Source information
An RNA of 177 nucleotides, treated with 2A3 and DMS and read out base by base. For 2A3 the reverse transcriptase was SuperScript II with manganese. Conditions: 150 mM KOAc, 10 mM MgCl2 and 150 mM bicine (pH 8.5), 24 C. It was measured as part of the RMDB library TTRDEL. DMS adducts were read by reverse transcription with MarathonRT.
RNA sequence: GGGAACGACUCGAGUAGAGUCGAAAAGAUAUGGACAUGAACAGCUUUUGACGUGCGGUCGGAAACGACACGCACGAUAAGCUGAAUGUCCUAAGUCAAAACUAACUACGGUUCGCCGUAGUUAGAACAUUCUAUCUGUGUUCGCACAGAUAGAAUGAAAAGAAACAACAACAACAAC
Reactivity to 2A3 in 0.01 (KOAc 150mM, MgCl2 10mM, bicine 150mM(pH8.5), 24C), signal-to-noise 9, nucleotides 027 to 126: g010a000u050a020u090g010g000a000c010a020u060g110a300a150c010a080g010c000u130u180u270u300g220a100c000g000u000g010c000g000g000u000c000g000g010a050a060a020c010g010a010c110a080c290g000c010a000c000g000a000u010a000a000g000c000u000g010a040a000u000g000u000c000c000u010a050a010g030u010c020a020a010a130a160c000u000a000a000c000u010a000c000g000g090u020u070c290g050c110c000g000u010a000g000u000u000a000g000a000a010
Reactivity to DMS in 0.01 (KOAc 150mM, MgCl2 10mM, bicine 150mM(pH8.5), 24C), signal-to-noise 9, nucleotides 027 to 126: g000a030u000a300u000g000g000a010c000a000u000g010a160a180c030a020g000c000u000u000u010u010g020a160c050g010u000g010c000g010g000u000c000g010g000a070a060a130c000g020a010c000a120c000g010c000a010c000g010a030u000a010a010g010c000u000g000a110a020u000g000u000c000c000u000a020a090g010u000c030a080a090a090a200c010u000a000a000c000u000a010c000g000g000u000u010c260g020c000c000g000u000a000g000u000u000a000g010a100a160